[RMDB]
RNA sequence: GGGAACGACUCGAGUAGAGUCGAAAAUGUUGAGUUCACCAGGAAUCGUCCGGUAGAUGUGCGGUUCAUAGAGUACAUGCCAUUCUCCGGAAACAAGUGGCAUACAGAGAGGCUCAUUUCGUAUAAAGGAUAAUCCCCUAUUCGUAGGGGAUUAUCCAAAAGAAACAACAACAACAAC
Reactivity to 2A3 in 0.01 (KOAc 150mM, MgCl2 10mM, bicine 150mM(pH8.5), 24C), signal-to-noise 2, nucleotides 027 to 126: u150g010u070u070g040a060g040u040u020c050a070c070c000a020g100g070a090a080u070c000g010u000c040c000g040g000u090a010g030a090u020g130u190g070c010g000g000u000u050c000a050u150a110g090a000g120u060a010c060a030u090g050c010c000a070u280u000c030u060c040c000g040g000a110a000a000c010a080a000g020u000g010g000c000a000u030a030c090a120g210a030g000a040g140g080c040u090c010a070u030u210u000c040g000u200a000u180a300a130a150
Reactivity to DMS in 0.01 (KOAc 150mM, MgCl2 10mM, bicine 150mM(pH8.5), 24C), signal-to-noise 3, nucleotides 027 to 126: u000g000u020u020g000a130g000u000u010c000a130c040c020a070g000g040a020a050u010c110g020u030c000c000g000g000u050a040g010a030u010g000u030g050c010g040g000u000u000c080a100u010a160g030a230g020u030a030c090a060u020g040c000c000a040u000u030c060u010c070c030g000g000a150a070a040c200a170a070g020u020g000g000c100a010u000a040c090a080g000a090g020a110g010g000c010u000c070a210u000u000u000c100g040u000a040u010a050a140a080
This 177-nucleotide RNA was probed chemically with 2A3 and DMS. DMS adducts were read by reverse transcription with MarathonRT. Conditions: 150 mM KOAc, 10 mM MgCl2 and 150 mM bicine (pH 8.5), 24 C. For 2A3, 606 sequencing reads were counted.